RNA sequence: GGGAACGACUCGAGUAGAGUCGAAAAUAGAUUCAAGUUACAUGUCUUUGACAGGAAUAUCACAGAAGAGAUGCUUUGUUUUUUUCAUUGCAUCCUUUUAGGUUGCACAGAGUAUCAGUAUGUCCUUUUCCUAGUGAUAGGAUCUGUAAAGUAAUUACAGUCCGCACGUAUUCGUACGUGCGGACUGAAAAGAAACAACAACAACAAC
Reactivity to 2A3 in 0.01 (KOAc 150mM, MgCl2 10mM, bicine 150mM(pH8.5), 24C), signal-to-noise 1, nucleotides 027 to 156: u140a030g150a020u110u050c100a110a020g110u240u220a020c020a010u070g020u070c000u080u170u060g110a020c010a040g100g000a050a040u020a000u020c000a010c010a020g110a120a000g030a040g000a090u000g000c010u000u010u000g170u080u060u120u010u020u100u300c040a050u060u170g000c000a010u020c000c000u140u270u000u100a010g000g010u000u050g020c000a000c000a020g000a000g010u070a020u030c040a040g050u150a160u090g200u020c010c000u000u080u090u110c000c000u000a040g010u000g150a040u000a000g000g050a070u020c010u000g000u040a040a080a000g000u010a140a000u060u050a060

This 207-nucleotide RNA was probed chemically with 2A3. The reactions ran in a buffer of 150 mM KOAc, 10 mM MgCl2 and 150 mM bicine (pH 8.5), at 24 C. The data come from the RNA Mapping Database (RMDB), library OK3TST. The 2A3 profile rests on 326 reads.